RNA sequence: GGGAACGACUCGAGUAGAGUCGAAAACUCCUCCAAAGGAACGCAGUUCCUCACCAGCAACAGAACAAAGCUGGAUGGAGAAUGAUUUUGACGAGCUGAGAGAAGAAGGCUUCAGACGAUCAAAUUACUCUGAGCUACGGGAGGACAUUCAAACCAACAUACGUCCUCCGUUCGCGGAGGACGUAUGAAAAGAAACAACAACAACAAC
Reactivity to 2A3 in 0.01 (KOAc 150mM, MgCl2 10mM, bicine 150mM(pH8.5), 24C), signal-to-noise 1, nucleotides 027 to 156: c000u000c000c000u000c020c000a030a020a030g120g000a010a030c010g070c300a060g000u010u000c010c000u000c020a050c000c000a000g000c020a040a140c010a110g100a210a040c020a080a090a000g000c000u000g040g000a050u050g040g000a000g000a020a090u130g000a020u000u030u020u120g050a030c030g040a090g000c000u010g040a000g000a000g040a300a000g080a040a000g120g090c000u080u050c030a030g030a150c030g070a080u030c050a030a030a030u080u130a100c000u030c010u050g070a050g000c070u020a010c070g090g000g000a000g000g000a000c030a020u050u090c040a050a050a100c000c000a000a010